[RMDB]
RNA sequence: GGGAACGACUCGAGUAGAGUCGAAAAAAAAACGCUGGGAAUCAUCGGGUGUAGACAUGAAGGUACUGAAGCGCGCACGGUAUCAGCUUCAACAGCUACAUCUCUAGCGUGUGAUUCCUGUGCUGAAGCGCGCACGGCAACCGAAAGGUGCGAAAAACUGAUUGCAGUAGUUCGCUACUGCAAUCAGAAAAGAAACAACAACAACAAC
Reactivity to 2A3 in 0.01 (KOAc 150mM, MgCl2 10mM, bicine 150mM(pH8.5), 24C), signal-to-noise 1, nucleotides 027 to 156: a000a000a000a000a020c050g000c020u020g000g000g050a010a010u010c000a010u050c030g030g000g010u030g000u000a010g090a130c040a090u040g010a030a000g010g000u020a000c020u030g040a220a030g010c000g030c010g000c000a010c040g010g020u050a000u060c020a090g130c040u080u080c010a100a160c020a080g080c010u020a000c010a010u040c080u000c120u200a070g120c020g150u300g000u000g060a010u000u020c000c000u040g100u120g080c000u010g030a110a010g000c010g000c000g000c000a000c000g030g000c010a030a150c010c040g070a040a100a000g030g010u100g010c090g040a050a000a120a030a030